[RMDB]
Notes:
Conditions: 150 mM KOAc, 10 mM MgCl2 and 150 mM bicine (pH 8.5), 24 C. The record gives the reactivity of an RNA of 177 nucleotides to DMS. For DMS the reverse transcriptase was MarathonRT. Source: RMDB library OK2TST, as collected in RNAgym.
RNA sequence: GGGAACGACUCGAGUAGAGUCGAAAACAGUUGAUACUCCUGAAGAGUACGAGGCAGCGUGGGAUGCCGAGCUGGCACGCGUCAAGGAAAAAGGUGCUGAGCUAGCGGAGGAGGUUCGUGAAGCUGAUGCUAUCCCCAGUUUCGACUGGGGAUAGCAAAAAGAAACAACAACAACAAC
Reactivity to DMS in 0.01 (KOAc 150mM, MgCl2 10mM, bicine 150mM(pH8.5), 24C), signal-to-noise 1, nucleotides 027 to 126: c030a110g030u000u000g030a170u000a090c020u000c000c030u120g000a090a160g010a000g030u000a070c100g020a130g010g020c040a020g030c030g000u000g060g000g000a100u010g000c070c010g000a190g010c070u010g010g040c040a060c080g070c050g000u000c080a030a110g000g000a050a110a080a100a030g000g000u010g010c020u010g000a070g020c050u000a040g010c010g000g000a050g000g000a090g030g030u000u000c060g000u000g000a170a110g000c050u020g000a100